[RMDB]
Overview:
The record gives the reactivity of an RNA of 170 nucleotides to DMS and 2A3. For DMS, 2,929 sequencing reads were counted. It was measured as part of the RMDB library 15KLIB. The RNA was probed in 150 mM KOAc, 10 mM MgCl2 and 150 mM bicine (pH 8.5) at 24 C. As a SHAPE reagent, 2A3 marks flexible, mostly unpaired nucleotides at the ribose 2'-OH. For 2A3 the reverse transcriptase was SuperScript II with manganese. For 2A3, 1,530 sequencing reads were counted.

RNA sequence: GGGAACGACUCGAGUAGAGUCGAAAAGACCAUAGCGAUGGGGGGAGAUGCUAGGAGUCGGAGGAGACCGAAGCGAGGAGGAAAGCAAAGAAAGCAACGGGGCUAGCGAGUGGAUGUUCCGCCCCCCUUAAGCCGGGGUUCGCCCCGGCUAAAAGAAACAACAACAACAAC
Reactivity to DMS in 0.01 (KOAc 150mM, MgCl2 10mM, bicine 150mM(pH8.5), 24C), signal-to-noise 1, nucleotides 027 to 129: g070a210c070c000a070u000a020g030c050g040a130u000g130g050g000g000g000g050a060g030a090u010g060c060u050a000g010g030a120g060u040c160g000g050a040g040g000a140g030a000c050c000g010a110a070g040c190g000a030g100g000a020g000g030a040a000a000g040c170a010a140a090g000a080a070a020g000c010a120a050c030g050g000g100g000c030u040a100g020c070g040a120g000u000g000g040a050u010g000u000u000c020c000g000c030c000c000c000c040c000u000u000a000
Reactivity to 2A3 in 0.01 (KOAc 150mM, MgCl2 10mM, bicine 150mM(pH8.5), 24C), signal-to-noise 1, nucleotides 027 to 129: g020a050c030c030a070u150a030g010c010g050a030u140g000g000g000g000g000g000a000g000a000u070g000c000u010a010g050g070a020g010u050c000g000g000a030g080g010a030g000a090c040c000g000a000a000g000c030g020a000g000g030a030g000g000a010a010a010g000c010a000a000a100g020a090a060a000g090c020a040a000c030g060g000g000g000c050u020a000g000c040g030a000g000u000g100g010a000u130g080u030u000c010c000g030c010c000c010c030c000c000u000u160a030